[RMDB]
RNA sequence: GGGAACGACUCGAGUAGAGUCGAAAAUGCCGCGGGUGUGGUCUCCAUGGGCGGUCGCCGGCGUGGCGCCUGUAUGGCUGUGCUUGAUGUGUCGCACCCGGAUAUCUGUGAUUUCGUCACCGCCAAGUACAGGGAUCAUAUUCGUAUGAUCCCUGUAAAAAGAAACAACAACAACAAC
Reactivity to DMS in 0.01 (KOAc 150mM, MgCl2 10mM, bicine 150mM(pH8.5), 24C), signal-to-noise 3, nucleotides 027 to 126: u010g010c030c030g020c030g000g000g020u000g020u000g010g000u000c020u010c290c040a070u010g010g010g020c020g010g020u000c040g010c070c110g010g030c070g020u010g020g030c090g010c030c000u010g010u000a060u020g020g040c020u000g020u010g010c020u010u000g000a090u010g010u010g000u000c010g010c010a050c010c020c000g010g010a100u000a030u000c120u010g010u000g010a070u000u000u010c130g000u010c040a040c030c080g020c080c050a090a120g010
Reactivity to 2A3 in 0.01 (KOAc 150mM, MgCl2 10mM, bicine 150mM(pH8.5), 24C), signal-to-noise 1, nucleotides 027 to 126: u070g050c010c000g050c010g010g030g010u020g000u000g010g030u030c020u000c030c030a080u110g000g000g060c030g010g040u040c000g000c000c040g030g040c010g060u070g100g000c090g030c020c010u070g020u120a150u160g030g000c000u020g020u110g150c010u030u020g030a070u030g110u020g010u020c000g000c000a010c000c000c020g020g000a080u130a020u060c100u010g070u030g070a090u060u120u050c070g060u030c030a020c050c030g020c020c030a050a010g050